[RMDB]
RNA sequence: GGGAACGACUCGAGUAGAGUCGAAAACUGCGUACUAGUGAUGUUUAAUACUGAGCCGGUUUACAGUAACUUACGCAUACACUACAUGUAAACUAGACCGUAUUAGUGUUUUACAUUGGUAGUGCUAGGAUCACUGAGAAUUCGUUCUUGGUGAUCCAAAAGAAACAACAACAACAAC
Reactivity to 2A3 in 0.01 (KOAc 150mM, MgCl2 10mM, bicine 150mM(pH8.5), 24C), signal-to-noise 9, nucleotides 027 to 126: c020u060g020c030g020u010a010c010u050a070g300u000g030a020u010g020u010u030u040a040a020u030a010c010u020g020a010g030c030c010g020g010u010u010u040a040c050a030g020u040a080a050c040u070u110a040c080g030c070a040u110a090c130a030c050u160a040c040a100u090g010u060a030a050a030c010u010a040g030a040c010c020g020u040a070u050u050a020g010u010g000u020u010u010u010a000c000a000u000u020g040g010u040a000g000u000g010c010u020a040
Reactivity to DMS in 0.01 (KOAc 150mM, MgCl2 10mM, bicine 150mM(pH8.5), 24C), signal-to-noise 7, nucleotides 027 to 126: c030u000g020c140g030u000a010c040u010a020g000u000g010a040u020g000u000u000u000a010a020u000a010c010u010g000a060g020c060c020g000g000u010u010u010a020c120a060g000u010a080a080c140u000u020a060c200g000c130a090u010a140c170a090c110u030a060c110a070u010g010u000a020a060a070c160u010a060g010a020c040c040g010u020a040u020u010a020g010u000g010u010u010u000u000a000c000a010u010u010g010g020u000a010g010u000g000c060u010a130
This 177-nucleotide RNA was probed chemically with 2A3 and DMS. The data come from the RNA Mapping Database (RMDB), library OK1LIB. The 2A3 profile rests on 105,221 reads. DMS adducts were read by reverse transcription with MarathonRT. Conditions: 150 mM KOAc, 10 mM MgCl2 and 150 mM bicine (pH 8.5), 24 C. For 2A3 the reverse transcriptase was SuperScript II with manganese.